The record gives the reactivity of an RNA of 177 nucleotides to 2A3 and DMS. For DMS, 1,095 sequencing reads were counted. For 2A3 the reverse transcriptase was SuperScript II with manganese. For 2A3, 835 sequencing reads were counted. The RNA was probed in 150 mM KOAc, 10 mM MgCl2 and 150 mM bicine (pH 8.5) at 24 C.

[RMDB]
RNA sequence: GGGAACGACUCGAGUAGAGUCGAAAAGAAGCAUGCGAAGUAGUUCGCUACGAAGUAUUACCCCGGCGAAUGCCAGUAAUACGAAGAUAUAGGAGGCGUAUGCCGGGCCUAUAUCGAAGCAUGCGAAGGGAAUGCUAUGCUUCGGCAUAGCAUUCCCAAAAGAAACAACAACAACAAC
Reactivity to 2A3 in 0.01 (KOAc 150mM, MgCl2 10mM, bicine 150mM(pH8.5), 24C), signal-to-noise 1, nucleotides 027 to 126: g030a000a090g000c050a000u050g000c000g060a000a010g010u000a000g000u030u080c270g000c210u000a000c010g040a030a020g000u000a000u000u010a010c040c020c000c150g020g000c030g070a300a030u300g000c000c000a010g000u060a030a000u000a000c000g000a000a000g020a000u000a000u020a000g050g000a010g010g000c010g090u120a050u300g000c000c000g000g120g000c000c000u000a000u000a000u020c040g040a020a020g000c030a000u000g000c000g020a000a070
Reactivity to DMS in 0.01 (KOAc 150mM, MgCl2 10mM, bicine 150mM(pH8.5), 24C), signal-to-noise 1, nucleotides 027 to 126: g000a100a220g000c000a000u000g000c000g020a180a300g000u000a080g020u020u040c160g060c000u030a000c000g030a050a210g000u030a000u000u000a000c000c000c080c150g040g000c000g000a070a010u100g000c000c010a100g000u000a000a010u000a050c000g010a130a180g000a000u000a050u010a000g000g000a300g000g000c030g000u000a090u180g010c000c000g040g000g120c000c000u000a000u000a020u000c000g010a080a300g000c070a000u000g000c000g000a110a070